Source: RMDB library OK3TST, as collected in RNAgym. Structure probing data (2A3 and DMS) for a 207-nucleotide construct.

[RMDB]
RNA sequence: GGGAACGACUCGAGUAGAGUCGAAAAAUCAUACUGUAGUCUUAACCUUCAAUGAGUCAAUAUCGUUACGCUCAUCUGACACGUGACGCACUCGUUCAGACUACAGUAUGUGUACGGUCCUUCAAUCAGGUGUCAGAUGAGCCUGAUAGAAGGACAAAUAUACCUGGCUAUUCGUAGCCAGGUAUAUAAAAGAAACAACAACAACAAC
Reactivity to 2A3 in 0.01 (KOAc 150mM, MgCl2 10mM, bicine 150mM(pH8.5), 24C), signal-to-noise 7, nucleotides 027 to 156: a000u060c000a000u000a000c000u010g010u010a000g000u010c000u020u030a020a030c050c050u250u180c180a190a220u300g000a020g020u070c080a090a150u080a080u260c020g010u020u020a020c020g010c030u040c030a200u090c110u120g040a040c030a010c080g010u000g000a010c030g010c070a020c020u020c060g010u010u020c020a000g000a000c000u000a000c000a000g000u000a000u000g000u000g010u020a040c110g090g000u000c000c000u000u000c010a020a020u000c000a000g010g010u020g100u050c010a020g050a270u100g030a120g010c000c000u000g000a000u010a050g010a000a000g000g000a000c000a000a010
Reactivity to DMS in 0.01 (KOAc 150mM, MgCl2 10mM, bicine 150mM(pH8.5), 24C), signal-to-noise 3, nucleotides 027 to 156: a080u000c000a030u000a000c000u080g000u000a010g020u000c010u000u000a090a090c080c130u000u000c120a060a070u010g000a010g030u000c020a110a120u000a060u000c030g020u000u000a030c040g020c070u010c060a170u000c120u010g010a160c120a020c060g010u000g060a020c060g010c080a040c010u000c010g020u000u000c090a060g010a020c010u000a000c020a010g020u000a000u010g020u000g010u000a040c050g040g000u000c010c010u000u000c000a170a060u010c010a000g000g020u000g030u000c040a260g000a220u000g000a300g020c000c010u000g010a030u000a090g000a030a020g010g000a010c000a040a080

Values cover nucleotides 27 to 156. For DMS the reverse transcriptase was MarathonRT.